Structure probing data (DMS and 2A3) for a 177-nucleotide construct. The reactions ran in a buffer of 150 mM KOAc, 10 mM MgCl2 and 150 mM bicine (pH 8.5), at 24 C. For 2A3 the reverse transcriptase was SuperScript II with manganese.
RNA sequence: GGGAACGACUCGAGUAGAGUCGAAAAUCAGGCAACUUCGGUUGCCUGAAAAUAAACUCGCCUAUAGCCAGGCGAGUACCAAAGCGGCUAAAGCAAUGGUAAAAACUGCCUCGUUCGCGAGGCAGAACUGCGUAAUAGACUUCGGUCUAUUACGCAGAAAAGAAACAACAACAACAAC
Reactivity to DMS in 0.01 (KOAc 150mM, MgCl2 10mM, bicine 150mM(pH8.5), 24C), signal-to-noise 1, nucleotides 027 to 126: u000c000a000g020g020c000a000a000c000u010u010c160g030g010u000u000g000c000c000u000g010a030a050a080a180u000a020a090a060c000u000c000g000c040c000u000a090u000a260g020c170c170a110g000g000c020g000a000g000u010a000c000c000a000a110a300g050c000g010g000c170u000a100a070a100g000c040a000a190u000g000g000u000a030a140a050a060a160c010u020g000c000c000u000c000g000u000u030c090g000c080g000a020g010g000c000a000g000a020a090
Reactivity to 2A3 in 0.01 (KOAc 150mM, MgCl2 10mM, bicine 150mM(pH8.5), 24C), signal-to-noise 1, nucleotides 027 to 126: u010c000a000g000g030c000a000a000c000u020u090c170g110g000u000u000g020c000c000u000g010a000a000a000a000u160a000a020a000c000u020c000g010c000c020u130a120u150a150g090c060c040a000g010g000c010g000a000g010u020a000c000c000a000a000a000g030c020g060g080c060u140a080a070a030g040c050a010a050u040g000g050u130a050a070a040a020a070c000u020g010c000c000u010c030g030u020u070c180g030c010g070a000g000g040c000a000g000a000a000
Background
It was measured as part of the RMDB library M2PK50. For DMS the reverse transcriptase was MarathonRT.